Structure probing data (DMS and 2A3) for a 177-nucleotide construct. The RNA was probed in 150 mM KOAc, 10 mM MgCl2 and 150 mM bicine (pH 8.5) at 24 C. DMS adducts were read by reverse transcription with MarathonRT. 2A3 adducts were read by reverse transcription with SuperScript II with manganese. For DMS, 15,646 sequencing reads were counted.

[RMDB]
RNA sequence: GGGAACGACUCGAGUAGAGUCGAAAAGAUAUGGAUCCCUGGGCAGCGACGACGUACGGUCGGAAACGACCGUACAUCAGCUGACCCACAUGGGAUCCUAAGUCAAACAGCGUGUUCGCACGCUGAAGAUACUUACAACGUUCGCGUUGUAAGUAUCAAAAGAAACAACAACAACAAC
Reactivity to DMS in 0.01 (KOAc 150mM, MgCl2 10mM, bicine 150mM(pH8.5), 24C), signal-to-noise 8, nucleotides 027 to 126: g000a030u000a230u010g000g000a010u000c000c000c040u000g010g000g020c010a010g000c010g020a080c300g010a010c020g000u000a000c000g010g010u000c000g010g000a040a040a090c010g010a010c000c000g000u000a000c000a010u010c000a080g010c000u000g000a150c000c000c020a070c300a100u010g010g020g010a000u000c000c000u000a000a070g010u000c020a130a140a290c010a010g010c000g040u000g000u000u010c270g040c000a010c000g000c000u000g010a070a100
Reactivity to 2A3 in 0.01 (KOAc 150mM, MgCl2 10mM, bicine 150mM(pH8.5), 24C), signal-to-noise 8, nucleotides 027 to 126: g010a020u050a020u120g000g000a010u010c000c010c030u040g020g110g010c010a010g000c020g220a290c100g000a000c020g300u010a000c000g000g010u000c010g010g010a060a030a010c010g000a010c000c000g000u000a000c000a000u010c000a000g000c000u030g220a300c000c070c000a040c040a080u160g010g010g000a000u000c000c000u000a030a000g020u010c040a120a080a120c000a020g010c010g010u010g070u110u190c260g030c170a000c000g000c000u000g000a020a010